[RMDB]
Chemical mapping of a 177-nucleotide RNA with 2A3 and DMS. 2A3 adducts were read by reverse transcription with SuperScript II with manganese. Reactivities are rounded to 0.1 and cut off at 0 and 3. The DMS profile rests on 4,203 reads. Reactivities are given for positions 27 through 126. The data come from the RNA Mapping Database (RMDB), library OK2TRN.
RNA sequence: GGGAACGACUCGAGUAGAGUCGAAAAGAACCUCCAAGUUCUGUUAUUGCUGGACUUGAGCGCUUGGAGCGGACAGGCAAGGUGGAGAUGACACCAGAGCUGACAGAGCUUGAGCGGGACGGCCUCCGACGUGGUAAAAGUUCGCUUUUACCACGUCAAAAGAAACAACAACAACAAC
Reactivity to 2A3 in 0.01 (KOAc 150mM, MgCl2 10mM, bicine 150mM(pH8.5), 24C), signal-to-noise 3, nucleotides 027 to 126: g010a040a040c000c010u000c020c000a010a000g000u000u010c010u010g030u030u050a200u200u250g020c030u080g000g100a240c000u020u070g050a080g090c050g000c020u050u220g190g030a080g020c010g030g110a010c020a040g000g030c040a070a130g020g010u040g050g100a260g040a210u220g060a050c000a010c020c000a030g030a010g140c000u000g010a010c010a010g000a000g000c000u010u020g010a020g020c000g020g000g000a040c040g070g030c000c020u050c050c070
Reactivity to DMS in 0.01 (KOAc 150mM, MgCl2 10mM, bicine 150mM(pH8.5), 24C), signal-to-noise 4, nucleotides 027 to 126: g010a110a180c040c010u000c050c030a040a020g010u000u000c020u000g010u010u000a080u020u010g020c020u000g010g010a110c040u010u000g010a130g010c030g020c030u020u020g040g000a140g020c020g010g000a100c040a040g000g000c050a150a120g010g020u000g000g000a210g020a160u010g010a200c030a030c010c000a210g010a120g010c040u000g000a060c030a030g000a040g000c010u000u000g000a090g020c120g010g000g000a170c060g000g000c030c010u010c150c100